[RMDB]
RNA sequence: GGGAACGACUCGAGUAGAGUCGAAAAGAUAUGGAUUACGCGAAACCGAUGAACUACGUCGUGGGUCGGAAACGACCCACAGACGCAUCGGGAGUAAUCCUAAGUCAAACCGGUCUUCGGACCGGAAGCUCCAUUAACAGUUCGCUGUUAAUGGAGCAAAAGAAACAACAACAACAAC
Reactivity to 2A3 in 0.01 (KOAc 150mM, MgCl2 10mM, bicine 150mM(pH8.5), 24C), signal-to-noise 2, nucleotides 027 to 126: g000a020u070a060u160g010g010a010u000u020a020c050g070c100g200a220a070a060c000c010g000a000u010g030a120a130c120u180a040c300g020u010c010g000u010g030g000g000u000c000g030g040a060a060a040c020g000a010c000c000c010a000c040a010g000a000c010g050c000a000u010c000g010g010g010a060g000u000a000a000u000c000c010u020a210a020g070u020c020a050a050a110c030c000g030g000u000c000u040u130c280g190g020a000c000c000g010g000a000a000
Reactivity to DMS in 0.01 (KOAc 150mM, MgCl2 10mM, bicine 150mM(pH8.5), 24C), signal-to-noise 2, nucleotides 027 to 126: g000a030u000a300u010g000g020a010u010u010a000c010g000c170g000a100a110a250c000c000g020a050u010g020a070a080c180u020a300c070g000u000c000g010u000g000g000g000u000c000g000g000a050a070a170c000g010a000c000c000c000a000c000a000g050a000c000g000c020a010u010c000g010g020g010a110g040u000a010a000u000c000c010u000a020a110g000u000c020a090a150a200c020c000g000g020u010c000u000u030c230g020g000a040c010c000g000g000a010a030
Structure probing data (2A3 and DMS) for a 177-nucleotide construct.
The 2A3 profile rests on 4,524 reads.
For 2A3 the reverse transcriptase was SuperScript II with manganese.
The DMS profile rests on 1,658 reads.
Conditions: 150 mM KOAc, 10 mM MgCl2 and 150 mM bicine (pH 8.5), 24 C.